[RMDB]
RNA sequence: GGGAACGACUCGAGUAGAGUCGAAAAGAUAUGGAGAAAGGAAUAGUGACUGAUCAAGCAACAGCAAUGACAUCGGAAACGAUGUAUUGACAUGCUUGGUCAGUCACUAUUCCUUUCUCCUAAGUCACACGAUCAAAGUGUUCGCACUUUGAUCGUGAAAAGAAACAACAACAACAAC
Reactivity to DMS in 0.01 (KOAc 150mM, MgCl2 10mM, bicine 150mM(pH8.5), 24C), signal-to-noise 2, nucleotides 027 to 126: g000a060u030a300u000g000g000a050g010a010a020a010g030g000a020a010u010a000g020u000g010a020c000u000g030a000u000c010a000a000g000c020a030a140c300a300g030c000a010a000u020g000a040c000a020u000c000g000g000a130a040a240c000g000a000u010g020u000a030u000u000g010a050c080a260u000g000c000u000u010g020g000u020c010a010g000u000c000a000c000u000a000u010u000c000c000u000u000u000c000u000c000c000u000a000a010g020u000c070a210
This 177-nucleotide RNA was probed chemically with DMS. Values cover nucleotides 27 to 126. The RNA was probed in 150 mM KOAc, 10 mM MgCl2 and 150 mM bicine (pH 8.5) at 24 C.